Source information
The data come from the RNA Mapping Database (RMDB), library RFMREP. Chemical mapping of a 177-nucleotide RNA with 2A3 and DMS. DMS adducts were read by reverse transcription with MarathonRT. DMS (dimethyl sulfate) methylates the pairing face of unpaired adenines and cytosines. The 2A3 profile rests on 946 reads. For 2A3 the reverse transcriptase was SuperScript II with manganese. Reactivities are given for positions 27 through 126. Conditions: 150 mM KOAc, 10 mM MgCl2 and 150 mM bicine (pH 8.5), 24 C.
RNA sequence: GGGAACGACUCGAGUAGAGUCGAAAAAAGCAGGAGGGCGAAAGUAGGUUAAGAGACAUCGCAAGACCUUCAAAACGAACUAUGCGAGUAGUUCACAGCUAAGUCUGUAUGGAUAUGCUGAAACGCGGUACUAGCCAAAGUUCGCUUUGGCUAGUACAAAAGAAACAACAACAACAAC
Reactivity to 2A3 in 0.01 (KOAc 150mM, MgCl2 10mM, bicine 150mM(pH8.5), 24C), signal-to-noise 1, nucleotides 027 to 126: a000a000g060c000a000g000g090a010g020g030g000c040g050a070a010a000g040u100a030g080g020u090u060a110a000g040a010g000a050c010a050u050c020g000c010a010a060g110a160c000c000u000u060c000a040a080a100a020c070g010a020a000c010u000a000u110g010c010g000a020g020u020a000g000u000u020c010a010c000a060g020c050u020a160a120g030u030c010u030g260u260a160u300g040g000a020u030a000u140g030c030u000g000a150a060a010c120g020c010g060
Reactivity to DMS in 0.01 (KOAc 150mM, MgCl2 10mM, bicine 150mM(pH8.5), 24C), signal-to-noise 2, nucleotides 027 to 126: a090a050g020c110a060g020g040a110g000g000g000c030g010a080a080a090g010u000a010g010g010u010u010a060a110g000a160g000a090c150a110u000c030g040c020a060a060g010a110c080c030u000u000c050a030a030a080a120c090g010a010a060c010u000a000u000g020c170g000a080g000u000a040g000u000u000c010a200c040a010g010c020u000a020a120g000u000c000u000g000u020a010u010g000g000a070u000a300u000g000c000u000g000a070a100a070c160g010c110g000